[RMDB]
RNA sequence: GGGAACGACUCGAGUAGAGUCGAAAAGCGGAUUCGCGACGUGCUGGGCGCUCAGGCGCGGGCCGCAGGAGCAGUGUUUGUCGACCCGAUCGCCGACCACUGGUUUGUCGACAGGCCCGAGCUGAUCCGACUGGAAACGGUUCGCCGUUUCCAGUCGAAAAGAAACAACAACAACAAC
Reactivity to DMS in 0.01 (KOAc 150mM, MgCl2 10mM, bicine 150mM(pH8.5), 24C), signal-to-noise 1, nucleotides 027 to 126: g010c060g010g000a150u000u020c060g000c010g000a120c070g010u000g010c020u000g000g020g000c060g030c080u000c050a140g000g010c020g000c040g010g000g010c010c020g000c050a300g010g010a030g020c020a040g000u000g000u020u000u020g020u000c010g000a060c000c090c090g000a150u000c110g000c010c000g010a030c030c030a080c030u000g010g000u000u000u000g000u010c060g020a160c050a120g010g000c030c000c020g000a080g000c000u000g000a130u010c070
Reactivity to 2A3 in 0.01 (KOAc 150mM, MgCl2 10mM, bicine 150mM(pH8.5), 24C), signal-to-noise 1, nucleotides 027 to 126: g010c020g040g080a170u150u140c000g000c020g030a030c050g070u100g050c010u040g010g020g060c050g010c070u000c080a100g060g010c030g010c030g010g030g010c000c010g010c020a020g070g000a010g030c020a000g000u030g020u080u050u010g000u040c000g000a020c120c000c020g020a260u020c020g000c030c000g040a030c010c010a010c040u000g300g070u000u010u080g150u040c020g030a100c030a080g000g000c000c000c000g000a020g030c000u030g010a030u040c070
Source: RMDB library OK2TRN, as collected in RNAgym. An RNA of 177 nucleotides, treated with DMS and 2A3 and read out base by base. The DMS profile rests on 1,361 reads. The 2A3 profile rests on 1,288 reads. For 2A3 the reverse transcriptase was SuperScript II with manganese. The RNA was probed in 150 mM KOAc, 10 mM MgCl2 and 150 mM bicine (pH 8.5) at 24 C.